[RMDB]
RNA sequence: GGGAACGACUCGAGUAGAGUCGAAAAAUGUCGUAUCGAUUUAAGGGUCGCUUGAACCCUACCAUAUUGCGUAAACUACCCCGCAAUUUGGUAGUGUUUGAUGGACACUGUUUGAUGUGUCAGGCACAAUGACUACCACCUUCGGGUGGUAGUCAUUAAAAGAAACAACAACAACAAC
Reactivity to 2A3 in 0.01 (KOAc 150mM, MgCl2 10mM, bicine 150mM(pH8.5), 24C), signal-to-noise 3, nucleotides 027 to 126: a010u130g040u070c040g030u030a030u040c040g020a100u060u060u240a120a080g030g030g000u020c030g050c180u000u060g040a010a020c020c050c010u000a000c010c000a010u010a010u050u030g040c010g080u210a100a140a180c160u240a220c070c000c010c000g010c000a000a000u000u010u010g000g000u000a000g000u000g020u000u040u000g090a070u040g040g010a020c000a050c050u000g060u070u160u100g100a080u050g060u000g020u080c100a080g100g040c100a050c020
Reactivity to DMS in 0.01 (KOAc 150mM, MgCl2 10mM, bicine 150mM(pH8.5), 24C), signal-to-noise 2, nucleotides 027 to 126: a130u010g000u000c020g000u040a050u000c010g000a100u010u030u020a130a020g000g000g010u010c040g010c130u010u020g010a000a030c000c060c000u000a000c000c000a010u000a020u000u020g020c000g000u030a100a070a100c210u020a150c070c090c070c000g020c000a000a000u000u000u000g000g000u010a000g000u000g000u020u010u000g010a020u010g000g000a040c040a040c000u000g010u010u030u030g010a050u000g000u000g020u010c000a090g000g000c130a100c180
The data come from the RNA Mapping Database (RMDB), library OK1LIB. The record gives the reactivity of an RNA of 177 nucleotides to 2A3 and DMS. The 2A3 profile rests on 1,132 reads. For DMS the reverse transcriptase was MarathonRT. Conditions: 150 mM KOAc, 10 mM MgCl2 and 150 mM bicine (pH 8.5), 24 C. 2A3 adducts were read by reverse transcription with SuperScript II with manganese. For DMS, 3,119 sequencing reads were counted.